This 177-nucleotide RNA was probed chemically with 2A3 and DMS.
[RMDB]
RNA sequence: GGGAACGACUCGAGUAGAGUCGAAAAGCCUCGUCGACAACCAGCAGCCGAUGUUCUGGCAGUACCGCCGAUUCGGCGACGGCAUCGAUGGCCAGCAGCGCGUGGUUGGUGACGACGACAUCGGCCAUCUGUAGGAGUACUUCGGUACUCCUACAGAAAAAGAAACAACAACAACAAC
Reactivity to 2A3 in 0.01 (KOAc 150mM, MgCl2 10mM, bicine 150mM(pH8.5), 24C), signal-to-noise 3, nucleotides 027 to 126: g030c020c000u000c010g010u010c000g010a040c040a080a070c020c010a010g070c020a020g030c060c010g060a040u060g020u180u020c030u100g040g000c030a020g050u050a060c000c050g000c010c010g080a230u130u220c080g060g040c040g040a010c010g030g040c030a060u100c080g150a140u150g100g000c000c010a020g000c010a020g020c010g000c090g140u080g040g000u010u030g000g030u010g030a030c000g010a000c020g000a010c020a130u100c050g030g000c040c020a040
Reactivity to DMS in 0.01 (KOAc 150mM, MgCl2 10mM, bicine 150mM(pH8.5), 24C), signal-to-noise 4, nucleotides 027 to 126: g010c020c010u000c020g010u000c000g000a100c080a150a030c010c010a060g000c030a170g020c030c010g010a090u000g000u010u020c040u000g020g030c000a120g000u010a050c120c080g010c000c000g010a240u000u010c160g000g030c010g000a060c010g000g000c050a050u010c090g000a140u030g010g000c000c000a020g010c030a070g010c030g030c110g020u000g010g050u000u000g000g000u010g000a120c030g000a030c030g000a070c160a060u000c100g000g020c040c110a110

The DMS profile rests on 4,631 reads. Values cover nucleotides 27 to 126. The data come from the RNA Mapping Database (RMDB), library OK2TST. The RNA was probed in 150 mM KOAc, 10 mM MgCl2 and 150 mM bicine (pH 8.5) at 24 C.